The data come from the RNA Mapping Database (RMDB), libraries RFM100 and RFMREP. The record gives the reactivity of an RNA of 177 nucleotides to DMS and 2A3. The RNA was probed in 150 mM KOAc, 10 mM MgCl2 and 150 mM bicine (pH 8.5) at 24 C.
[RMDB]
RNA sequence: GGGAACGACUCGAGUAGAGUCGAAAAUGGCGUCGCGUGUGAGGCGCGUGCAGGGUGAGUGUGAGUGGACGCGUGAGUGUGUGAGUGUGCGCGCUUGGAGCGUGUUAGGCGAGUGCGUGCGCCCACCAGAGUGCAGGGUAUUCGUACCCUGCACUCUAAAAGAAACAACAACAACAAC
Reactivity to DMS in 0.01 (KOAc 150mM, MgCl2 10mM, bicine 150mM(pH8.5), 24C), signal-to-noise 1, nucleotides 027 to 126: u030g000g020c020g030u010c050g010c070g000u000g010u000g010a050g030g000c040g010c050g010u000g000c030a030g000g000g010u000g020a080g010u010g010u000g000a120g050u000g000g000a070c110g000c050g000u010g000a150g000u000g020u000g010u020g000a090g010u000g040u000g000c020g020c020g000c050u010u040g020g010a180g000c100g010u000g020u040u040a080g010g000c010g010a030g020u000g000c030g030u010g010c010g000c000c020c000a020c040c090
Reactivity to 2A3 in 0.01 (KOAc 150mM, MgCl2 10mM, bicine 150mM(pH8.5), 24C), signal-to-noise 2, nucleotides 027 to 126: u100g070g000c010g020u070c010g030c050g020u040g050u070g090a020g060g000c010g000c000g030u010g000c010a000g020g010g050u050g030a120g010u140g000u030g050a060g010u060g000g020a040c020g030c000g070u120g030a060g080u130g020u040g000u020g020a080g010u010g000u010g000c000g000c010g010c000u010u020g070g000a100g020c070g020u090g160u230u140a080g050g040c000g020a020g020u010g020c000g000u010g000c000g020c010c000c000a000c000c000